[RMDB]
RNA sequence: GGGAACGACUCGAGUAGAGUCGAAAAAGCCGCACAUCCGGAUCGCCCAGCGAGGUCGACAACAGCUGCUCGAUCCGCCUUAUCCGGUAGCGAACGGUGUUGGGAUGCACUUGCAGUGACCGUGCGGGAUGAGACUUUUAUUCGUAAAAGUCUCAUCAAAAGAAACAACAACAACAAC
Reactivity to 2A3 in 0.01 (KOAc 150mM, MgCl2 10mM, bicine 150mM(pH8.5), 24C), signal-to-noise 6, nucleotides 027 to 126: a000g050c010c000g000c010a010c000a040u020c000c010g010g020a040u070c080g040c020c000c000a000g000c000g010a230g000g000u020c010g020a010c010a130a030c030a120g140c160u110g010c050u010c000g000a010u000c000c000g000c000c000u100u050a020u010c010c000g000g010u010a010g010c010g010a020a010c020g010g010u020g030u060u080g170g110g030a090u210g000c010a010c000u020u070g000c060a030g000u010g030a030c050c120g010u000g010c000g000g000
Reactivity to DMS in 0.01 (KOAc 150mM, MgCl2 10mM, bicine 150mM(pH8.5), 24C), signal-to-noise 9, nucleotides 027 to 126: a110g040c010c000g010c030a020c020a160u010c020c010g000g010a030u000c300g000c020c020c020a270g010c010g010a110g020g000u000c010g000a040c030a060a110c220a160g010c220u000g000c200u000c010g010a010u000c010c000g000c010c030u000u010a090u000c030c010g000g000u000a280g010c010g010a040a190c080g010g010u000g010u000u010g010g010g010a140u000g000c020a030c020u000u000g010c300a160g000u000g010a100c110c090g000u000g020c010g000g000

This 177-nucleotide RNA was probed chemically with 2A3 and DMS. For DMS the reverse transcriptase was MarathonRT. Values cover nucleotides 27 to 126. For DMS, 14,920 sequencing reads were counted. Source: RMDB library OK2TRN, as collected in RNAgym.